About this RNA
The record gives the reactivity of an RNA of 177 nucleotides to DMS and 2A3. For 2A3, 2,120 sequencing reads were counted. High DMS reactivity at an A or C suggests that its Watson-Crick edge is free. The RNA was probed in 150 mM KOAc, 10 mM MgCl2 and 150 mM bicine (pH 8.5) at 24 C. For DMS the reverse transcriptase was MarathonRT. 2A3 adducts were read by reverse transcription with SuperScript II with manganese.
[RMDB]
RNA sequence: GGGAACGACUCGAGUAGAGUCGAAAACCUGAAUGGGAAUGCGCUUCAGGGGCGCGUGGAAACGCCCAGGAGGCAGCGGCGACGGCGCAGCCUGGGACUGCCAGGAGCGCCGGGCGGGAAGCGGCCUCUUAGCUGUGACCUUCGGGUCACAGCUAAGAAAAGAAACAACAACAACAAC
Reactivity to DMS in 0.01 (KOAc 150mM, MgCl2 10mM, bicine 150mM(pH8.5), 24C), signal-to-noise 3, nucleotides 027 to 126: c000c000u000g000a110a080u040g000g010g000a100a060u030g000c070g000c010u000u000c100a110g010g000g000g000c020g020c020g020u040g020g020a090a150a180c110g000c010c060c000a090g000g000a010g000g000c000a110g000c020g010g020c020g000a100c000g000g000c010g030c010a140g030c000c000u010g010g010g000a150c190u020g010c000c000a030g000g010a300g000c000g000c010c000g000g000g050c020g000g000g030a100a090g000c040g000g000c020c010u000
Reactivity to 2A3 in 0.01 (KOAc 150mM, MgCl2 10mM, bicine 150mM(pH8.5), 24C), signal-to-noise 3, nucleotides 027 to 126: c000c000u010g120a150a070u100g020g000g050a070a100u150g020c010g010c030u070u060c060a090g040g000g030g000c010g010c010g030u040g040g130a120a020a020c010g010c000c000c000a010g040g020a000g000g010c040a050g020c050g050g040c000g000a080c050g010g000c000g000c030a150g070c010c000u010g020g040g230a300c170u140g050c010c010a000g000g000a020g000c000g000c010c000g000g010g020c040g000g010g030a060a070g050c010g040g000c000c000u010